[RMDB]
RNA sequence: GGGAACGACUCGAGUAGAGUCGAAAAUGCCCUGUGAGAUGGGAGUAUCUGGCCCGUUUUGCAGGUGACAAAACCAAGGCUCAGGGAGCCGCGUCCCCAGGCCUGUCCUGUACUCUCUCUCUGGCCCCCGAGUUCAGAGCCUGCGUGCCUGGCCUCACACGUCCGCUAAUUUCGAUUAGCGGACGUGAAAAGAAACAACAACAACAAC
Reactivity to 2A3 in 0.01 (KOAc 150mM, MgCl2 10mM, bicine 150mM(pH8.5), 24C), signal-to-noise 1, nucleotides 027 to 156: u040g010c010c010c000u020g020u020g040a030g000a000u090g000g000g000a050g080u130a170u210c240u200g180g020c000c000c000g000u000u000u000u000g010c010a000g030g030u030g000a140c050a010a040a000a000c000c000a040a080g000g000c050u060c210a010g000g060g040a030g050c020c070g050c090g020u060c110c040c000c000a000g020g010c010c090u180g040u110c000c000u010g010u060a080c000u020c000u000c020u000c010u010c020u100g050g000c010c000c000c000c070g030a010g030u000u040c030a010g030a060g110c040c010u130g110c110g020u070g000c000c010u000g000g030c010c000u000c000a030
Reactivity to DMS in 0.01 (KOAc 150mM, MgCl2 10mM, bicine 150mM(pH8.5), 24C), signal-to-noise 1, nucleotides 027 to 156: u010g030c010c000c020u020g060u010g000a070g020a050u000g020g020g030a090g000u010a090u000c220u030g030g020c000c010c020g030u000u020u000u010g000c040a050g040g040u020g030a180c050a050a070a070a120c030c080a070a040g000g010c010u020c060a050g000g030g020a090g060c030c110g020c170g010u010c000c050c020c070a090g020g000c010c020u000g010u000c040c080u030g040u000a030c010u000c010u010c030u000c000u000c000u000g000g000c010c030c020c060c060g010a080g030u000u000c070a110g020a210g000c030c010u000g020c110g000u010g010c000c020u000g000g000c040c040u030c070a260